Source information
Structure probing data (2A3) for a 177-nucleotide construct. The data come from the RNA Mapping Database (RMDB), library RFM100. High 2A3 reactivity points to a flexible backbone, as in loops and unpaired stretches.
RNA sequence: GGGAACGACUCGAGUAGAGUCGAAAACGCCUUUGUGUUGCCCAUUCACUUUUGGAAACUAGUGGAUGUGGUGUCAAAAAAGGCGAACACAAAACACUUUCGCAGCUUUUUUUCCUGCCCUUGUAUUGUGAGGAGCUAGGUUCGCCUAGCUCCUCACAAAAGAAACAACAACAACAAC
Reactivity to 2A3 in 0.01 (KOAc 150mM, MgCl2 10mM, bicine 150mM(pH8.5), 24C), signal-to-noise 2, nucleotides 027 to 126: c020g020c000c000u040u040u020g140u020g030u040u100g000c000c000c000a000u010u000c000a000c010u120u170u180u190g170g040a020a120a090c050u000a030g000u020g000g040a000u020g270u300g000g000u000g030u060c000a170a150a000a000a000a000g000g000c030g050a090a000c080a010c020a030a000a140a000c040a010c020u000u050u090c020g050c010a010g030c070u000u010u040u020u000u070u140c020c000u020g010c060c000c030u040u060g060u070a120u080u050